The record gives the reactivity of an RNA of 177 nucleotides to DMS and 2A3. It was measured as part of the RMDB library M2PK90. For 2A3 the reverse transcriptase was SuperScript II with manganese. Values cover nucleotides 27 to 126. For DMS, 3,394 sequencing reads were counted. For 2A3, 3,245 sequencing reads were counted.

RNA sequence: GGGAACGACUCGAGUAGAGUCGAAAAAUCAUGACGAAGAAAGGACGAGAGCAAGCUCAGAGGCAAGCUGAGAGGCAAGCUCAAAGAAAGGAGCGUCCAACUCCUUACCCUCGUCUUUUAAAAAGAACAAAUAAAGAUACUUCGGUAUCUUUAUUUGAAAAGAAACAACAACAACAAC
Reactivity to DMS in 0.01 (KOAc 150mM, MgCl2 10mM, bicine 150mM(pH8.5), 24C), signal-to-noise 5, nucleotides 027 to 126: a080u020c090a090u000g010a090c100g020a110a110g010a030a030a020g000g010a020c000g010a090g010a040g000c070a060a160g000c050u000c040a080g000a190g010g010c060a040a190g010c000u000g010a110g000a180g010g020c050a050a270g010c000u010c030a070a090a100g010a110a090a020g000g000a010g000c010g010u010c160c120a060a220c040u000c010c000u000u010a130c020c020c020u000c010g010u000c000u010u010u010u000a020a060a060a070a090g000a100a150
Reactivity to 2A3 in 0.01 (KOAc 150mM, MgCl2 10mM, bicine 150mM(pH8.5), 24C), signal-to-noise 2, nucleotides 027 to 126: a000u170c100a080u150g090a070c060g020a030a120g080a110a070a010g020g000a000c010g000a010g000a000g100c050a090a020g010c010u020c040a020g020a040g100g080c030a030a040g000c000u010g000a050g010a010g030g080c040a040a000g010c000u010c040a070a090a010g090a010a040a000g020g000a010g000c030g040u020c000c020a020a070c010u000c010c000u000u050a040c000c000c020u010c000g000u000c000u040u020u020u030a080a080a000a000a000g080a060a020

Conditions: 150 mM KOAc, 10 mM MgCl2 and 150 mM bicine (pH 8.5), 24 C.